This 177-nucleotide RNA was probed chemically with 2A3 and DMS.
RNA sequence: GGGAACGACUCGAGUAGAGUCGAAAAAGGGACAAGAAUUCCUCUCCACGAUUAGUGUGGUCUGGUUAUGAAUCAAGUUUAGUUAUGAACACUGUCCCCCAACUAAAUAACCAUGAAGACAACAUUCAUCGUGUUAAGGGUUCGCCCUUAACACGAUAAAAGAAACAACAACAACAAC
Reactivity to 2A3 in 0.01 (KOAc 150mM, MgCl2 10mM, bicine 150mM(pH8.5), 24C), signal-to-noise 1, nucleotides 027 to 126: a000g010g000g020a030c070a100a020g050a080a100u090u050c010c000u050c000u000c030c000a020c020g030a050u090u160a150g050u020g020u010g100g010u000c010u000g000g000u060u010a080u160g140a110a090u130c070a140a100g020u000u070u070a100g040u080u080a100u220g130a090a000c050a030c070u060g110u070c000c000c000c040c000a020a040c040u080a100a030a130u050a020a010c030c040a000u070g040a000a000g010a010c010a000a000c010a010u000u060c020
Reactivity to DMS in 0.01 (KOAc 150mM, MgCl2 10mM, bicine 150mM(pH8.5), 24C), signal-to-noise 2, nucleotides 027 to 126: a070g000g000g000a020c110a130a090g020a170a120u000u000c000c020u000c070u000c080c010a030c060g000a120u010u000a050g010u000g000u000g000g020u000c000u010g000g000u000u000a020u000g020a090a140u050c220a060a160g010u000u000u000a020g040u000u000a150u000g010a070a080c080a180c170u010g000u000c010c000c020c050c070a010a150c070u000a070a030a020u000a020a060c060c030a060u000g070a050a050g000a040c070a030a010c040a060u010u000c150